[RMDB]
RNA sequence: GGGAACGACUCGAGUAGAGUCGAAAAAGUCGUCUUCACCUCCAAAGGUUGCGUUCUUAUUCGCAGAAAUAACACGCAGUCGGGCGUAAGGUCCCGGCUCUCAAAAGGCAAGGUGUACGAUCCAUCCAUCCACCCGGCUGCAGGGACACCAUUUAAAAGUACCCGAUUAGUUCGCUAAUCGGGUACUAAAAGAAACAACAACAACAAC
Reactivity to 2A3 in 0.01 (KOAc 150mM, MgCl2 10mM, bicine 150mM(pH8.5), 24C), signal-to-noise 2, nucleotides 027 to 156: a000g040u030c030g020u000c000u070u110c040a020c020c010u140c020c030a130a000a050g080g020u070u060g000c030g010u080u020c050u070u120a040u090u030c040g040c050a010g180a090a080a000u090a010a080c080a000c150g000c000a020g010u020c000g020g000g000c000g130u210a080a070g150g010u040c000c020c030g030g000c000u030c020u020c030a070a130a000a000g010g030c070a040a030g000g010u080g020u010a080c030g000a030u000c060c000a040u040c010c000a060u140c040c010a060c050c020c000g010g030c000u030g000c060a040g020g030g030a020c030a020c150c000a060u170u220u300a070a300a000

Source information:
An RNA of 207 nucleotides, treated with 2A3 and read out base by base. For 2A3, 557 sequencing reads were counted.